Structure probing data (DMS) for a 177-nucleotide construct. For DMS the reverse transcriptase was MarathonRT. It was measured as part of the RMDB library OK2TST. Values cover nucleotides 27 to 126. The RNA was probed in 150 mM KOAc, 10 mM MgCl2 and 150 mM bicine (pH 8.5) at 24 C.
[RMDB]
RNA sequence: GGGAACGACUCGAGUAGAGUCGAAAAUCGAGCUCCACCGCCUUCUCGAAACAGGCCCUCGCCUCCUCGUACCGCUCCUGCACGAAGGACAAGACGCCCAGCACGUUCCAGGCCCGUGCGGAGGCCGGACCGGAGCAUUGUUCGCAAUGCUCCGGUCAAAAGAAACAACAACAACAAC
Reactivity to DMS in 0.01 (KOAc 150mM, MgCl2 10mM, bicine 150mM(pH8.5), 24C), signal-to-noise 1, nucleotides 027 to 126: u000c060g020a140g020c060u000c060c020a110c080c040g010c050c020u000u000c050u000c030g000a080a140a080c170a100g000g000c050c040c010u000c080g010c010c050u000c030c010u000c070g010u000a090c040c060g010c050u000c000c030u000g010c060a040c060g010a130a060g010g000a030c050a080a150g010a080c110g020c000c010c040a130g040c140a070c040g000u000u000c020c050a080g030g000c100c030c040g000u000g020c080g030g020a100g000g000c000c010g000